[RMDB]
Chemical mapping of a 177-nucleotide RNA with DMS and 2A3. High DMS reactivity at an A or C suggests that its Watson-Crick edge is free. 2A3 adducts were read by reverse transcription with SuperScript II with manganese. The reactions ran in a buffer of 150 mM KOAc, 10 mM MgCl2 and 150 mM bicine (pH 8.5), at 24 C. Reactivities are given for positions 27 through 126.
RNA sequence: GGGAACGACUCGAGUAGAGUCGAAAAGAUAUGGACAGAACUACAGGACAACUGCGUUGAAAUCGGAAACGAUGGAGCAGCUAAUCCUGCUGUCCUAAGUCAAAACAGGAGACUUCGGUCUCCUGAAGCUAAAAUAAUGCUUCGGCAUUAUUUUAGCAAAAGAAACAACAACAACAAC
Reactivity to DMS in 0.01 (KOAc 150mM, MgCl2 10mM, bicine 150mM(pH8.5), 24C), signal-to-noise 3, nucleotides 027 to 126: g000a030u000a300u000g000g010a010c000a020g000a080a030c080u030a300c010a000g010g000a020c070a150a180c000u000g010c010g000u000u020g000a070a090a030u000c000g000g000a060a030a130c020g020a000u000g010g000a120g010c000a010g010c000u000a130a290u000c000c000u000g000c000u000g000u000c000c000u000a010a080g010u010c040a110a050a110a270c020a000g000g000a000g010a010c000u000u030c160g010g010u000c000u000c000c000u000g000a010a050
Reactivity to 2A3 in 0.01 (KOAc 150mM, MgCl2 10mM, bicine 150mM(pH8.5), 24C), signal-to-noise 3, nucleotides 027 to 126: g000a000u080a020u130g020g020a020c010a010g020a080a070c130u280a070c300a030g000g020a000c010a070a030c150u020g000c010g260u300u060g010a060a040a000u000c000g000g020a070a040a010c000g000a010u000g000g030a030g010c000a000g010c030u070a030a110u010c020c010u000g000c010u010g010u000c000c000u000a080a010g030u020c030a000a000a140a160c010a010g020g000a000g010a000c010u110u150c300g110g010u000c000u020c020c000u000g010a010a010